An RNA of 177 nucleotides, treated with 2A3 and DMS and read out base by base. The RNA was probed in 150 mM KOAc, 10 mM MgCl2 and 150 mM bicine (pH 8.5) at 24 C. The DMS profile rests on 1,926 reads. DMS adducts were read by reverse transcription with MarathonRT. 2A3 is a SHAPE reagent: it acylates the 2'-hydroxyl of flexible nucleotides of all four kinds. It was measured as part of the RMDB library RFMREP.

[RMDB]
RNA sequence: GGGAACGACUCGAGUAGAGUCGAAAACUGUGCUAUUCCAUCAGCCUACAGACCUGGUACCUGGAUUUUUGCCCGAGAUGAUUCCUACCACCUUACUACUGACGAAGACACCCAUUCCAGUGGACCACAAUCUUAGUGACUUCGGUCACUAAGAUUGAAAAGAAACAACAACAACAAC
Reactivity to 2A3 in 0.01 (KOAc 150mM, MgCl2 10mM, bicine 150mM(pH8.5), 24C), signal-to-noise 3, nucleotides 027 to 126: c020u030g010u060g000c000u070a070u160u080c030c020a080u060c020a040g020c010c010u040a040c020a060g040a090c000c030u040g040g020u030a060c000c030u050g010g090a130u050u050u030u080u140g060c040c000c010g040a070g000a040u130g010a020u030u050c000c010u020a060c010c030a030c020c010u020u110a070c000u030a030c000u010g070a040c050g050a030a010g080a020c000a060c020c000c030a030u060u040c030c000a020g020u030g030g040a060c030c010a020
Reactivity to DMS in 0.01 (KOAc 150mM, MgCl2 10mM, bicine 150mM(pH8.5), 24C), signal-to-noise 3, nucleotides 027 to 126: c060u000g000u010g000c050u000a110u000u000c060c040a090u000c070a050g010c010c060u000a090c050a110g000a100c070c050u010g010g020u000a050c050c030u000g000g000a060u000u000u000u000u000g020c040c020c010g010a080g000a070u000g000a130u000u000c010c010u000a090c080c020a070c080c060u030u010a090c040u010a080c040u010g000a070c070g020a080a060g000a110c090a060c050c030c010a120u000u000c040c020a070g020u010g010g000a100c130c090a120